[RMDB]
RNA sequence: GGGAACGACUCGAGUAGAGUCGAAAACAUAAGACCUCAGAGCUAAUGAGCCACAUACCUACCCAAGGUUAAAGCUCCUUCUCUCGCAAUGUGUAACUCAUGAUUCUCAUGACCCCUGGUUGGAGAGCGCGCUAACACGCCUUCGGGCGUGUUAGAAGCAAAUUACUAUCUUCGGAUAGUAAUUUGCAAAAGAAACAACAACAACAAC
Reactivity to 2A3 in 0.01 (KOAc 150mM, MgCl2 10mM, bicine 150mM(pH8.5), 24C), signal-to-noise 5, nucleotides 027 to 156: c030a020u160a060a060g060a050c010c060u080c090a020g010a010g050c030u080a100a050u080g020a010g030c040c020a050c030a070u150a030c010c010u040a070c020c020c020a040a020g040g000u030u060a080a070a020g010c020u030c010c030u090u030c030u010c010u020c050g030c080a050a100u050g070u030g030u130a050a050c020u000c040a020u040g050a140u250u050c080u040c070a050u090g040a080c000c000c000c040u040g050g000u030u020g010g010a040g020a010g060c090g000c000g000c060u000a000a000c000a000c000g000c010c000u040u050c210g090g000g000c000g000u000g000u000u000a000g000a000a000
Reactivity to DMS in 0.01 (KOAc 150mM, MgCl2 10mM, bicine 150mM(pH8.5), 24C), signal-to-noise 3, nucleotides 027 to 156: c040a160u010a060a110g000a070c050c030u010c040a100g020a060g020c100u010a080a110u000g010a090g040c010c030a190c070a110u000a060c030c030u000a080c050c040c040a140a110g050g020u000u000a050a110a080g010c050u000c020c040u000u000c040u000c010u000c030g010c060a080a100u020g020u010g010u000a070a060c020u000c010a080u000g020a140u000u000c050u000c010a080u000g000a100c040c020c000c000u010g030g010u010u010g000g000a080g000a080g010c060g010c100g010c000u000a020a020c020a010c000g000c010c000u000u010c300g040g020g030c000g030u010g000u010u000a020g000a070a150
This 207-nucleotide RNA was probed chemically with 2A3 and DMS. Reactivities are given for positions 27 through 156. The RNA was probed in 150 mM KOAc, 10 mM MgCl2 and 150 mM bicine (pH 8.5) at 24 C.